[RMDB]
RNA sequence: GGGAACGACUCGAGUAGAGUCGAAAAAGGAUUGGUCGACGGUAGGUCAGUAUGCCCCGAAUAUCCCGGGCUACACGCGGGCUACAAUGGAUAGGACAAUGGGUAACUACACCGAAAGGUGGCGUCACAGUCUUAUAUUCUUCGGAAUAUAAGACUGAAAAGAAACAACAACAACAAC
Reactivity to 2A3 in 0.01 (KOAc 150mM, MgCl2 10mM, bicine 150mM(pH8.5), 24C), signal-to-noise 9, nucleotides 027 to 126: a000g130g010a100u090u110g060g010u050c030g020a060c030g030g050u090a050g040g090u040c040a000g020u040a060u160g020c010c000c000c020g040a070a040u080a050u120c020c020c000g000g020g000c020u060a030c050a010c060g070c080g000g020g000c010u050a050c050a050a110u120g030g010a040u040a080g040g010a010c030a060a080u090g050g000g000u030a040a020c020u060a030c030a010c020c010g040a050a020a010g020g010u020g020g010c010g030u030c020a020
Reactivity to DMS in 0.01 (KOAc 150mM, MgCl2 10mM, bicine 150mM(pH8.5), 24C), signal-to-noise 9, nucleotides 027 to 126: a080g000g010a070u010u000g010g010u000c030g010a080c110g010g000u020a040g010g010u000c050a100g010u010a050u030g000c040c010c020c090g000a110a100u020a080u010c050c020c070g000g000g000c030u010a050c100a080c100g010c080g000g000g010c030u010a050c100a060a070u010g000g000a050u010a040g010g000a060c080a060a060u010g010g000g010u010a060a050c070u010a090c030a030c020c010g000a070a070a110g000g010u000g000g000c100g000u010c080a170